[RMDB]
RNA sequence: GGGAACGACUCGAGUAGAGUCGAAAAGGUGACUUCGGUCACCACCUCCUCCUAAGUCACUCUGGGAGUGCAAUACAGAGCUGAUUCGGAAACGAAUCAGCGACGAAGUAUUGAACUACACUCGAGUGAUAUGGAAUUCGGCGGCCUUCGGGCCGAAAUGGUACUUGAAGUUCGCUUCAAGUACCAUAAAAGAAACAACAACAACAAC
Reactivity to 2A3 in 0.01 (KOAc 150mM, MgCl2 10mM, bicine 150mM(pH8.5), 24C), signal-to-noise 3, nucleotides 027 to 156: g000g000u030g010a000c030u080u140c300g030g000u000c000a000c000c000a030c000c010u010c000c020u030c000c000u060a160a070g020u000c010a010c000u000c080u130g050g060g040a040g000u010g010c000a000a000u010a000c010a010g030a010g020c000u010g000a000u010u000c000g010g070a080a090a060c000g000a000a000u000c000a000g020c000g090a030c000g070a060a010g000u000a000u000u000g010a040a010c020u150a120c220a090c030u020c010g000a000g000u010g010a010u000a010u020g010g030a020a010u140u230c070g090g010c000g010g030c040c010u090u210c240g100g000g000c000c000g010a010a020
Reactivity to DMS in 0.01 (KOAc 150mM, MgCl2 10mM, bicine 150mM(pH8.5), 24C), signal-to-noise 1, nucleotides 027 to 156: g000g030u000g040a060c000u000u000c210g010g000u000c000a050c010c010a030c010c040u020c060c000u000c040c010u000a080a210g040u000c000a010c020u020c010u010g020g070g010a060g040u030g030c000a000a020u000a010c010a060g000a300g030c000u010g020a010u000u000c000g040g000a210a070a300c000g000a040a000u000c000a010g030c000g000a030c100g040a240a170g000u000a020u000u010g000a050a000c010u000a070c080a130c030u010c150g000a030g010u000g000a040u000a170u000g000g010a080a100u010u000c000g020g010c000g000g010c050c020u000u010c270g010g020g030c000c010g000a000a020